[RMDB]
RNA sequence: GGGAACGACUCGAGUAGAGUCGAAAAGGCGUUCAUCGUGAGGACGUUCACAGAGAAGACACGGUUGGCAGCACCCCUCAGCGUCGGACCGAGACGUGGCCCCGAAGUAGCAGGGGCGGAAGUGGCGGCCGACCUUUUGGUUCGCCAAAAGGUCGGCAAAAGAAACAACAACAACAAC
Reactivity to DMS in 0.01 (KOAc 150mM, MgCl2 10mM, bicine 150mM(pH8.5), 24C), signal-to-noise 1, nucleotides 027 to 126: g020g000c030g040u000u010c090a020u000c080g020u000g030a140g000g010a070c060g010u000u000c070a070c160a100g020a190g020a170a050g000a090c030a060c050g000g020u000u000g010g000c020a060g000c100a090c050c040c040c040u000c120a120g000c050g010u000c030g000g010a160c010c010g010a130g000a060c060g020u000g000g000c000c000c050c010g000a100a090g000u010a070g000c280a130g000g000g010g060c030g000g000a030a100g040u030g010g030c080g000